[RMDB]
RNA sequence: GGGAACGACUCGAGUAGAGUCGAAAAGAUAUGGAAGAGCUAGUCGAAUGAACUACUCCGAACGAUCGGAAACGAUCGUACGGAGCAUUCGAGGCUCUUCCUAAGUCAAAAGCAGGGUUCGCCCUGCGAAAGACUACGCGUUCGCGCGUAGUCUUUCAAAAGAAACAACAACAACAAC
Reactivity to 2A3 in 0.01 (KOAc 150mM, MgCl2 10mM, bicine 150mM(pH8.5), 24C), signal-to-noise 2, nucleotides 027 to 126: g010a010u140a050u120g000g000a010a020g000a000g020c020u090a110g300u080c000g020a000a000u000g000a060a060c080u260a060c000u300c010c010g010a020a010c000g000a010u010c000g030g030a100a040a040c020g020a020u000c020g000u030a020c000g000g020a000g040c000a000u010u020c000g010a010g000g000c000u000c000u000u010c000c000u000a010a000g000u000c020a000a000a110a200g000c000a010g040g000g060u070u200c290g220c060c000c000u000g010c000
Reactivity to DMS in 0.01 (KOAc 150mM, MgCl2 10mM, bicine 150mM(pH8.5), 24C), signal-to-noise 3, nucleotides 027 to 126: g000a020u010a300u010g000g010a020a010g000a000g020c010u000a150g000u000c010g010a020a020u010g020a080a080c080u010a300c020u010c010c000g020a090a030c010g020a000u000c000g020g000a170a110a220c030g000a000u000c000g040u000a030c010g010g000a000g000c010a000u000u010c010g000a020g000g000c000u000c000u000u000c000c000u000a010a110g010u020c040a060a130a110a230g010c010a000g000g000g020u000u000c260g020c000c000c010u000g010c000